[RMDB]
RNA sequence: GGGAACGACUCGAGUAGAGUCGAAAAAGAGAAUGAUGUUGCAAGUUAGUAGGAGUAAGAAAUGCUGUGUUCUCCCUGUCUUCUCUUAGGUCACAUGGCAGCCUGGCCUAAGUGAUCGUGAAUGGUCUAUAAGGGAGGUAGCUGGGACAGGGAGGGGCUUAUAUGUCUUCUUCGGAAGACAUAUAAGAAAAGAAACAACAACAACAAC
Reactivity to 2A3 in 0.01 (KOAc 150mM, MgCl2 10mM, bicine 150mM(pH8.5), 24C), signal-to-noise 6, nucleotides 027 to 156: a010g070a010g020a030a060u110g040a020u060g020u060u060g020c070a080a080g010u080u070a020g010u080a040g020g070a030g030u080a080a050g070a080a100a040u100g010c040u040g020u020g020u110u020c020u020c010c000c000u010g020u010c010u090u000c030u010c000u010u020a020g000g000u010c000a010c020a100u100g060g000c020a020g050c020c060u050g030g000c010c000u020a080a000g010u010g010a050u040c030g000u010g090a090a110u140g040g020u030c050u090a090u030a150a070g040g010g000a020g020g020u030a020g010c060u060g030g000g000a020c010a020g020g000g010a030g010g000g010g000
Reactivity to DMS in 0.01 (KOAc 150mM, MgCl2 10mM, bicine 150mM(pH8.5), 24C), signal-to-noise 2, nucleotides 027 to 156: a090g020a070g020a100a090u000g030a120u000g030u010u010g000c050a040a070g010u000u000a070g020u000a100g030g010a080g030u010a060a070g020a050a080a090u020g020c020u010g020u010g020u000u010c000u000c000c020c010u000g020u000c030u000u000c050u000c010u000u000a050g060g050u010c000a300c030a170u000g000g000c010a070g020c060c090u010g020g040c010c000u000a020a100g030u000g000a020u000c030g070u020g000a070a090u000g020g000u000c060u000a130u000a060a080g020g000g020a050g010g040u000a000g010c060u000g000g010g020a050c040a060g000g000g000a070g000g010g000g020